Description:
Chemical mapping of a 177-nucleotide RNA with 2A3 and DMS.

RNA sequence: GGGAACGACUCGAGUAGAGUCGAAAAAAAAAGAUAUGGACUGGAACUACAGUGUAAGAGCAGCGUUGAAACCAAAUCGGAAACGAUUUGGUGGAGCUGCUCUGAGCUGCCAGUCCUAAGUCAAAAAGAUCUAUUAUAUGUUCGCAUAUAAUAGAUCAAAAGAAACAACAACAACAAC
Reactivity to 2A3 in 0.01 (KOAc 150mM, MgCl2 10mM, bicine 150mM(pH8.5), 24C), signal-to-noise 2, nucleotides 027 to 126: a000a000a000a000a030g020a010u060a010u050g010g010a000c010u010g030g030a170a050c100u290a110c300a000g010u040g050u220a020a010g000a000g020c020a000g000c020g300u300u050g000a020a000a010c000c000a000a010a020u000c000g020g010a020a020a010c010g000a010u010u020u000g030g010u020g000g010a000g000c000u000g000c010u000c000u020g000a000g000c010u000g000c000c000a000g020u000c000c000u010a000a000g000u000c000a050a030a000a120a080
Reactivity to DMS in 0.01 (KOAc 150mM, MgCl2 10mM, bicine 150mM(pH8.5), 24C), signal-to-noise 3, nucleotides 027 to 126: a030a060a090a120a130g000a000u010a120u020g000g000a040c000u000g000g010a200a020c060u030a300c030a010g020u000g010u010a300a050g000a010g000c000a010g010c000g000u000u000g000a160a140a020c000c000a000a010a000u000c010g000g000a020a030a040c000g000a010u000u000u000g000g000u000g000g000a030g010c010u000g010c010u000c000u000g000a190g010c000u000g000c000c000a010g000u000c000c010u000a000a060g010u010c010a060a080a090a090a100

Conditions: 150 mM KOAc, 10 mM MgCl2 and 150 mM bicine (pH 8.5), 24 C. For DMS the reverse transcriptase was MarathonRT.